[RMDB]
RNA sequence: GGGAACGACUCGAGUAGAGUCGAAAAUCUAUUGAUGUUUUUAACGCUACAAUCAUAGAAGCGUAUAACCUGUAUACAGCUGGAGAUUAUCAUCUGAUCAUCAAUCCUUCAGAUAAUCUGAAAAUGAGAGUUUUACACAAUUCGUUGUGUAAAACUCAAAAGAAACAACAACAACAAC
Reactivity to DMS in 0.01 (KOAc 150mM, MgCl2 10mM, bicine 150mM(pH8.5), 24C), signal-to-noise 3, nucleotides 027 to 126: u000c050u030a090u010u010g010a050u000g000u000u010u000u000u000a070a100c090g020c080u030a050c120a110a110u020c110a110u030a230g020a090a060g020c020g030u000a050u020a070a110c140c040u000g000u000a120u010a100c150a110g010c080u000g000g020a060g000a030u000u000a030u000c130a070u000c080u000g000a010u000c060a020u000c070a050a070u000c080c100u000u000c020a040g010a120u010a090a080u020c020u010g000a010a090a080a110u010g000a230
Reactivity to 2A3 in 0.01 (KOAc 150mM, MgCl2 10mM, bicine 150mM(pH8.5), 24C), signal-to-noise 2, nucleotides 027 to 126: u050c010u020a060u060u080g000a030u040g120u000u090u030u020u130a110a030c030g000c010u040a030c050a150a100u090c040a040u070a160g040a140a000g050c010g000u040a040u030a100a020c000c000u040g010u070a080u000a110c060a040g050c010u040g060g030a060g010a060u070u060a050u140c050a010u000c020u070g020a010u010c020a000u020c000a010a040u050c000c040u030u000c010a010g000a040u080a120a130u050c010u010g040a040a040a030a050u100g020a060